RNA sequence: GGGAACGACUCGAGUAGAGUCGAAAAGGGUGAGAAAUUUGCCGAGUAUGAACGUGGCACACGCGUUGAUGCGGCCGUAUCUGUCAACGCCGGCAUUUCAUACACGAAUCGGUUUACGGGCUAUGUCGUGGAACGCCGUGAGAACGAACAGGCCGGCGAGAUUUCCAUGAUUCGUCAUGGAAAUCUCAAAAGAAACAACAACAACAAC
Reactivity to DMS in 0.01 (KOAc 150mM, MgCl2 10mM, bicine 150mM(pH8.5), 24C), signal-to-noise 2, nucleotides 027 to 156: g010g000g030u000g030a090g010a100a060a080u000u000u000g030c030c000g010a190g030u000a070u000g020a020a040c100g020u010g020g030c050a080c120a090c030g040c010g040u010u000g000a040u000g000c070g050g020c010c060g020u000a110u000c030u010g000u000c030a060a120c040g010c020c000g010g040c000a120u000u000u040c030a080u000a160c000a060c030g020a080a100u010c010g000g010u010u000u000a060c050g040g010g000c050u010a090u010g000u000c050g000u010g000g000a060a090c030g010c000c000g050u000g020a140g000a090a070c060g000a100a040c050a130g010g010c000c010g000g020c060
Reactivity to 2A3 in 0.01 (KOAc 150mM, MgCl2 10mM, bicine 150mM(pH8.5), 24C), signal-to-noise 3, nucleotides 027 to 156: g040g000g020u050g000a080g090a020a100a050u170u120u110g010c000c010g010a030g010u100a040u040g060a060a020c130g080u050g100g010c070a020c010a020c110g030c020g020u000u040g080a060u050g010c030g000g010c030c010g030u070a090u100c050u090g090u070c040a050a030c060g010c000c000g020g000c010a010u020u060u000c040a030u050a040c030a000c100g070a050a060u100c040g020g000u030u110u110a070c050g040g070g000c050u090a070u230g110u070c010g030u050g010g020a060a040c070g010c020c020g000u030g010a070g000a030a020c050g010a010a000c020a070g040g000c020c000g000g000c020

Chemical mapping of a 207-nucleotide RNA with DMS and 2A3.
2A3 adducts were read by reverse transcription with SuperScript II with manganese.
In probing experiments dimethyl sulfate is read out at A N1 and C N3, which are open when not base-paired.
For DMS the reverse transcriptase was MarathonRT.
The RNA was probed in 150 mM KOAc, 10 mM MgCl2 and 150 mM bicine (pH 8.5) at 24 C.